[RMDB]
RNA sequence: GGGAACGACUCGAGUAGAGUCGAAAAACAAGCAGUAUGAGACCCAAAAAGAAAUGCUUGAGCGUAUCGCUACUCAAGCAGGAAAGACUAGCGAUGAAUACCGUAAGCAAAAGCAACGCUUAGAUGAGACAGCUACUAGCUUGGCUCAUGCUCGUAACUCUAUGUCCGGGUUCGCCCGGACAUAGAGAAAAGAAACAACAACAACAAC
Reactivity to 2A3 in 0.01 (KOAc 150mM, MgCl2 10mM, bicine 150mM(pH8.5), 24C), signal-to-noise 1, nucleotides 027 to 156: a000c070a030a000g090c000a010g060u010a020u130g050a040g060a070c030c030c080a040a070a000a000a000g110a030a100a000u030g000c000u030u020g000a000g000c010g030u130a040u300c030g040c100u060a020c000u020c030a000a000g000c040a030g020g060a070a050a000g010a100c060u030a000g000c070g060a060u060g070a020a050u100a130c090c020g060u060a010a000g010c030a190a010a070a060g020c060a090a170c080g000c030u050u060a060g010a040u170g020a070g000a020c040a020g000c030u050a080c000u060a050g100c000u040u100g000g020c000u000c000a000u050g000c000u010c020g100u120a040a100
An RNA of 207 nucleotides, treated with 2A3 and read out base by base. Conditions: 150 mM KOAc, 10 mM MgCl2 and 150 mM bicine (pH 8.5), 24 C. The 2A3 profile rests on 426 reads. Reactivities are given for positions 27 through 156.